[RMDB]
RNA sequence: GGGAACGACUCGAGUAGAGUCGAAAAGAUAUGGAAUAGGCUUGACUUGGUGUCAAGGCAACAGCAGACAUGUAUCGGAAACGAUACUCUGACAUGCCUUGACACCAAGUCAAGCUAUUCCUAAGUCCAUCCACAGAUAGUUCGCUAUCUGUGGAUGAAAAGAAACAACAACAACAAC
Reactivity to DMS in 0.01 (KOAc 150mM, MgCl2 10mM, bicine 150mM(pH8.5), 24C), signal-to-noise 5, nucleotides 027 to 126: g010a100u000a300u010g000g010a010a010u000a010g010g020c000u000u000g010a010c000u000u010g000g020u000g000u010c000a000a010g010g020c010a020a090c300a240g000c030a000g010a100c300a110u020g000u000a000u000c000g000g000a140a100a300c000g010a030u000a000c010u000c010u000g000a040c090a180u020g000c010c000u000u000g000a010c000a010c010c000a000a000g010u000c010a000a010g000c000u000a000u000u000c000c000u010a040a110g000u000c050

The data come from the RNA Mapping Database (RMDB), library TTRINS. This 177-nucleotide RNA was probed chemically with DMS. The reactions ran in a buffer of 150 mM KOAc, 10 mM MgCl2 and 150 mM bicine (pH 8.5), at 24 C.